[RMDB]
RNA sequence: GGGAACGACUCGAGUAGAGUCGAAAAUUCAGCAGAAACUAACGGCUUGUGGAUUUCUUUCUGACUAACAACAGGUCUAACACUCCUCGUCACUAUUACUAUUAACAGCUUGGAUGUCGGCAUGGCUCCCUAGGAUCACAUUCGUGUGAUCCUAGGGAAAAGAAACAACAACAACAAC
Reactivity to 2A3 in 0.01 (KOAc 150mM, MgCl2 10mM, bicine 150mM(pH8.5), 24C), signal-to-noise 4, nucleotides 027 to 126: u050u010c000a010g010c000a000g070a060a090a030c080u110a050a090c060g040g080c020u070u150g000u050g080g060a210u040u040u070c030u030u090u010c080u050g110a130c020u030a170a030c070a010a000c000a060g060g010u010c010u030a070a010c000a000c040u000c020c020u060c040g080u070c060a000c040u060a050u220u130a080c060u040a030u250u120a150a040c040a020g060c010u060u060g020g040a040u040g060u050c000g030g010c030a040u120g040g000c020u000